[RMDB]
An RNA of 177 nucleotides, treated with 2A3 and DMS and read out base by base.
Values cover nucleotides 27 to 126.
The RNA was probed in 150 mM KOAc, 10 mM MgCl2 and 150 mM bicine (pH 8.5) at 24 C.
RNA sequence: GGGAACGACUCGAGUAGAGUCGAAAAUUUGCACUAUUAAUCAGAAAUAGUUCACAGUUUAUGAGCGUAUUUCCUUCAUGCAGUGCAUAGAAUAAUGUUUUCAUACUCACUUUACCCUCAGGUGCUUUAAAUCUGACAAGUUCGCUUGUCAGAUUUAAAAAGAAACAACAACAACAAC
Reactivity to 2A3 in 0.01 (KOAc 150mM, MgCl2 10mM, bicine 150mM(pH8.5), 24C), signal-to-noise 1, nucleotides 027 to 126: u060u020u020g000c000a000c020u000a030u130u070a080a060u110c040a020g010a020a010a010u020a010g040u000u010c030a060c050a120g060u140u160u210a090u120g000a000g000c080g060u020a020u000u000u010c000c000u040u090c030a060u090g070c090a000g000u010g000c000a010u040a070g070a020a070u220a110a060u050g090u030u020u030u030c050a040u060a140c030u030c030a030c010u040u050u090a070c000c000c000u030c020a010g010g040u020g010c000u020u010
Reactivity to DMS in 0.01 (KOAc 150mM, MgCl2 10mM, bicine 150mM(pH8.5), 24C), signal-to-noise 3, nucleotides 027 to 126: u030u000u010g030c020a000c020u000a100u010u000a130a090u030c300a190g030a000a000a010u000a050g030u000u010c000a040c290a080g000u030u020u040a080u020g000a030g000c010g020u020a010u000u020u000c000c070u000u020c190a060u020g000c110a030g000u000g010c030a060u000a020g010a020a110u030a050a080u060g040u020u030u000u000c040a070u010a060c140u030c000a050c020u000u010u020a070c020c000c020u020c040a040g000g000u000g030c240u040u020